Conditions: 150 mM KOAc, 10 mM MgCl2 and 150 mM bicine (pH 8.5), 24 C. An RNA of 177 nucleotides, treated with 2A3 and DMS and read out base by base. For DMS the reverse transcriptase was MarathonRT. For 2A3 the reverse transcriptase was SuperScript II with manganese.
RNA sequence: GGGAACGACUCGAGUAGAGUCGAAAAAGAGGUUACGGACUCGGGGGCAGUACCCGACGCCUCCACCAAAACUUUCUAAAUAACUUGCUCCUAAAGGUAAUUUGUACGUCGAUCCGGUACUCAAUAAAUUUGAUGACAACUUCGGUUGUCAUCAAGUAAAAGAAACAACAACAACAAC
Reactivity to 2A3 in 0.01 (KOAc 150mM, MgCl2 10mM, bicine 150mM(pH8.5), 24C), signal-to-noise 2, nucleotides 027 to 126: a000g010a010g000g010u030u030a020c030g010g010a010c010u020c030g000g000g000g000g000c020a020g000u020a050c000c000c000g010a010c030g000c000c000u000c000c000a030c000c000a000a000a020a030c020u070u110u000c020u080a040a020a040u140a030a020c030u000u060g020c000u000c010c000u000a010a030a010g020g010u010a030a070u020u050u080g050u020a010c000g020u000c010g010a010u000c010c010g010g020u000a010c010u000c030a030a030u040a110a090
Reactivity to DMS in 0.01 (KOAc 150mM, MgCl2 10mM, bicine 150mM(pH8.5), 24C), signal-to-noise 5, nucleotides 027 to 126: a070g000a040g010g000u000u020a100c300g000g000a080c140u030c110g000g000g000g000g010c010a070g000u020a070c050c010c010g000a140c130g000c020c000u000c000c020a150c030c020a060a170a060a070c070u000u040u020c060u000a050a080a110u020a070a070c080u020u010g000c030u000c010c020u010a040a070a090g000g010u020a040a060u020u010u020g000u000a040c020g000u010c050g000a060u010c020c010g000g010u000a030c060u000c050a060a060u020a060a060